[RMDB]
The record gives the reactivity of an RNA of 207 nucleotides to 2A3. 2A3 adducts were read by reverse transcription with SuperScript II with manganese.

RNA sequence: GGGAACGACUCGAGUAGAGUCGAAAAUUACAAGAGGAAGAGAGAACUGAGCUGACAUGCUCUUGCCCUCUUGCCAUGUGAUACCCUCUGCCAUGUAAUGGCAGGCACAGCAAGAAGGUCCUCAACAGAUGCCAGCAGCAUGUUCUUGGACUUCCCACCGUGCUAAUAGUUUCGACUAUUAGCACGGAAAAGAAACAACAACAACAAC
Reactivity to 2A3 in 0.01 (KOAc 150mM, MgCl2 10mM, bicine 150mM(pH8.5), 24C), signal-to-noise 3, nucleotides 027 to 156: u280u140a080c060a090a010g070a130g010g000a000a000g010a020g000a000g000a040a010c010u080g020a020g040c000u030g030a050c010a090u090g140c020u010c000u010u070g000c010c010c010u000c000u000u000g000c010c060a230u130g010u000g010a050u300a300c020c010c010u110c000u020g000c000c000a090u200g130u300a290a150u040g110g000c000a000g000g010c000a000c000a000g030c000a000a010g020a020a060g010g030u130c060c090u160c070a000a010c030a050g060a030u060g020c020c000a020g000c010a000g040c030a050u160g010u000u000c000u000u090g040g030a070c020u000u000c010c010c000a010